Description
The record gives the reactivity of an RNA of 207 nucleotides to 2A3 and DMS. The reactions ran in a buffer of 150 mM KOAc, 10 mM MgCl2 and 150 mM bicine (pH 8.5), at 24 C. For 2A3, 3,624 sequencing reads were counted. The DMS profile rests on 2,191 reads.
RNA sequence: GGGAACGACUCGAGUAGAGUCGAAAAGGGGUCCCAGCUGUCGAGGAUAAAGAGGUAUGGCUGAAGCCUCCACGGCCAUACUACCCACCUUUAUCUACCCACCGACAGCAAUGGGACGGAGGCACCCAAAAUCUAAGAAGAGUUCGCUCUUCUUAGACAAGUGGAAUUACUUCGGUAAUUCCACUUGAAAAGAAACAACAACAACAAC
Reactivity to 2A3 in 0.01 (KOAc 150mM, MgCl2 10mM, bicine 150mM(pH8.5), 24C), signal-to-noise 1, nucleotides 027 to 156: g040g030g050g000u010c000c000c000a000g030c000u010g010u000c000g000a010g000g000a000u010a000a010a000g010a000g030g000u000a000u000g000g020c000u020g030a080a010g000c000c000u000c000c000a010c000g010g050c000c000a010u000a000c000u040a040c040c050c000a050c000c000u000u000u010a000u020c000u010a060c090c090c050a060c030c010g000a000c000a000g000c000a000a300u080g000g000g000a000c000g000g010a000g010g010c010a000c000c000c000a050a110a010a040u000c000u000a000a000g000a000a000g010a000g030u080u170c190g150c120u010c000u000u000c000u000u000a000g000a010
Reactivity to DMS in 0.01 (KOAc 150mM, MgCl2 10mM, bicine 150mM(pH8.5), 24C), signal-to-noise 2, nucleotides 027 to 156: g000g020g000g030u000c000c010c040a010g020c010u000g010u010c010g020a270g000g010a100u000a030a020a020g020a250g010g010u010a000u000g020g000c000u010g010a140a070g020c000c000u010c000c000a300c060g000g000c000c010a010u000a010c000u010a040c000c040c050a300c090c000u000u000u020a010u010c010u000a090c000c000c010a300c040c000g000a040c000a040g010c020a040a040u020g010g010g000a060c000g000g010a040g030g060c000a040c000c000c000a040a080a090a270u010c000u000a010a020g010a000a010g000a070g060u000u000c300g030c010u000c000u000u000c000u000u000a010g020a010